This 207-nucleotide RNA was probed chemically with 2A3 and DMS. It was measured as part of the RMDB library M2RFPK.
[RMDB]
RNA sequence: GGGAACGACUCGAGUAGAGUCGAAAAACAUAUUACGAUAUGAUUCAGAUGGUGUCUUACUGGUUCGUACCAAGGGACAUAAUGGUUUCUUGUUUCCAACCAAAGAACAAGUGGCGAGCCUGAGUAAAAAACUGACUGCCGUUCGCGGCAGUCAGAAGAUACGUAGAGACUUCGGUCUCUACGUAUCAAAAGAAACAACAACAACAAC
Reactivity to 2A3 in 0.01 (KOAc 150mM, MgCl2 10mM, bicine 150mM(pH8.5), 24C), signal-to-noise 4, nucleotides 027 to 156: a000c030a010u100a030u070u130a070c080g040a030u030a030u170g100a070u100u150c060a060g080a120u130g080g060u050g020u010c030u030u110a100c030u040g010g050u040u130c060g050u090a060c000c030a010a030g000g020g010a010c020a020u140a080a110u110g030g000u000u020u000c010u010u010g010u000u030u010c010c030a080a080c010c000a090a030a020g010a030a010c020a050a020g030u020g050g020c030g020a010g020c010c030u060g040a030g040u090a040a080a030a020a040a030c000u000g000a000c000u010g000c010c000g020u040u070c210g010c000g070g000c010a000g000u000c000a000g000a000a000
Reactivity to DMS in 0.01 (KOAc 150mM, MgCl2 10mM, bicine 150mM(pH8.5), 24C), signal-to-noise 1, nucleotides 027 to 156: a120c030a070u000a170u010u000a100c090g010a160u000a060u000g000a110u020u000c010a120g000a140u010g010g000u010g000u000c040u010u000a140c070u000g000g020u000u000c070g000u000a110c100c000a070a080g040g010g000a090c030a070u000a140a140u000g010g030u000u010u010c030u000u000g010u000u020u010c020c040a090a060c070c040a010a080a090g010a050a070c050a030a130g010u000g000g000c030g020a090g010c010c030u000g010a100g030u000a000a040a070a060a060a120c000u010g010a010c000u000g060c020c000g000u000u000c300g030c030g000g080c010a000g000u000c000a000g010a030a050
Reactivities are given for positions 27 through 156. The RNA was probed in 150 mM KOAc, 10 mM MgCl2 and 150 mM bicine (pH 8.5) at 24 C.